[RMDB]
RNA sequence: GGGAACGACUCGAGUAGAGUCGAAAAGAAAGAAAGAAAGAAAUUUGCAUUUGGCUUUAGAAACACAAAGCAUGUGUGGUAUUUUAACUCAUACAUAACUUGUGUCUCUUAGAUCAAAUGUGAGUAAGACAGUUACCCAGUUCGCUGGGUAACUGUCAAAAGAAACAACAACAACAAC
Reactivity to 2A3 in 0.01 (KOAc 150mM, MgCl2 10mM, bicine 150mM(pH8.5), 24C), signal-to-noise 3, nucleotides 027 to 126: g070a040a050a010g070a040a080a000g080a020a120a050g100a010a210a030u060u030u030g010c000a000u000u000u000g000g000c010u050u100u080a020g020a020a020a000c030a000c010a000a050a000g020c040a040u000g010u010g010u000g010g040u050a220u060u080u030u210a100a020c030u040c060a000u020a020c000a000u030a080a040c000u010u000g000u000g000u000c000u020c000u050u040a080g040a190u000c000a000a020a000u000g010u000g000a010g070u080a100a060

Annotation: This 177-nucleotide RNA was probed chemically with 2A3. Source: RMDB library RFM100, as collected in RNAgym. For 2A3, 1,554 sequencing reads were counted. 2A3 adducts were read by reverse transcription with SuperScript II with manganese.